[RMDB]
RNA sequence: GGGAACGACUCGAGUAGAGUCGAAAAGAAGGGUGAAAGCCCUUGAUACUGUAGUGGAAAUUAUAAAUAAGAAAAGUUCUGAGUUGCUUAAGCAGAACUAAAAUAAAAAGACAAGCAUUAUUACAAACAUGGCGAGGUAAGUUCGCUUACCUCGCAACUGUUACGUGAUGUUCGCAUCACGUAACAGAAAAGAAACAACAACAACAAC
Reactivity to 2A3 in 0.01 (KOAc 150mM, MgCl2 10mM, bicine 150mM(pH8.5), 24C), signal-to-noise 1, nucleotides 027 to 156: g030a000a000g000g020g000u010g000a130a040a000g080c020c000c000u000u030g040a060u040a140c040u010g110u120a050g030u030g020g030a020a090a040u100u020a040u150a240a120a070u210a070a040g060a060a120a020a030g000u000u000c000u000g030a030g020u060u110g030c010u040u010a120a000g020c000a010g000a000a000c040u040a000a000a000a000u040a000a050a020a000a000g070a020c040a000a000g000c020a000u020u080a030u040u100a200c070a020a090a010c050a120u150g130g000c020g000a010g000g000u020a020a030g000u010u060c110g010c070u000u000a000c000c000u010c000g000c020a000a000
Description: An RNA of 207 nucleotides, treated with 2A3 and read out base by base. Source: RMDB library M2RFPK, as collected in RNAgym. For 2A3, 986 sequencing reads were counted.